[RMDB]
RNA sequence: GGGAACGACUCGAGUAGAGUCGAAAAAGUUUCUCGAUAAUUGAUCUGUAGAAUCUGUCAAGCAAAACCCCAAAACCUUACACUGAGAGUAUUUAGCCUGAUUACUCUUUAAAUCAAAUCAGGCAAUUCAAGGUCGCAGUCUUCGGACUGCGACCAAGUAAAUCAUCUUCUUCGGAAGAUGAUUUACAAAAGAAACAACAACAACAAC
Reactivity to 2A3 in 0.01 (KOAc 150mM, MgCl2 10mM, bicine 150mM(pH8.5), 24C), signal-to-noise 2, nucleotides 027 to 156: a000g020u030u040u000c020u020c030g010a030u190a300a120u120u160g010a030u020c050u070g130u160a050g030a120a050u010c010u060g140u140c090a030a030g020c030a030a040a070a220c050c010c010c030a090a120a050a050c080c040u120u160a060c100a050c140u120g130a000g000a000g030u010a050u000u060u030a030g000c000c000u020g000a010u010u010a000c000u000c000u140u300u050a020a010a020u170c070a020a010a020u010c000a000g010g040c020a000a000u040u040c030a030a060g040g000u000c000g040c010a000g010u000c000u030u080c090g090g000a010c000u000g030c000g000a000c000c000a000a000
This 207-nucleotide RNA was probed chemically with 2A3. For 2A3, 751 sequencing reads were counted. Reactivities are rounded to 0.1 and cut off at 0 and 3. The RNA was probed in 150 mM KOAc, 10 mM MgCl2 and 150 mM bicine (pH 8.5) at 24 C. It was measured as part of the RMDB library M2RFPK.